Structure probing data (DMS) for a 177-nucleotide construct. Values cover nucleotides 27 to 126. Reactivities are rounded to 0.1 and cut off at 0 and 3. DMS adducts were read by reverse transcription with MarathonRT.
RNA sequence: GGGAACGACUCGAGUAGAGUCGAAAAUAUCUUUCUGUCUGGGUCUUUGUGAUUUGGCAGAACCACAAAUGACAUGUCACACACUGCAUACCCUAUUGAUUGCGAAAGUAACUUCCUCAGGAAACAGAAAAAUUCGAUGUUUCGACAUCGAAUUUUUAAAAGAAACAACAACAACAAC
Reactivity to DMS in 0.01 (KOAc 150mM, MgCl2 10mM, bicine 150mM(pH8.5), 24C), signal-to-noise 2, nucleotides 027 to 126: u010a080u020c040u000u010u010c010u010g010u000c050u030g000g010g030u000c020u000u000u000g010u000g010a100u000u000u000g000g000c110a050g020a050a110c110c100a050c130a060a120a120u000g000a060c060a110u000g010u010c000a040c030a010c070a080c090u010g010c130a080u010a040c040c020c010u030a160u030u010g000a080u000u000g030c170g010a020a040a070g010u000a090a070c130u000u000c010c000u000c180a130g000g030a080a030a140c140a150g020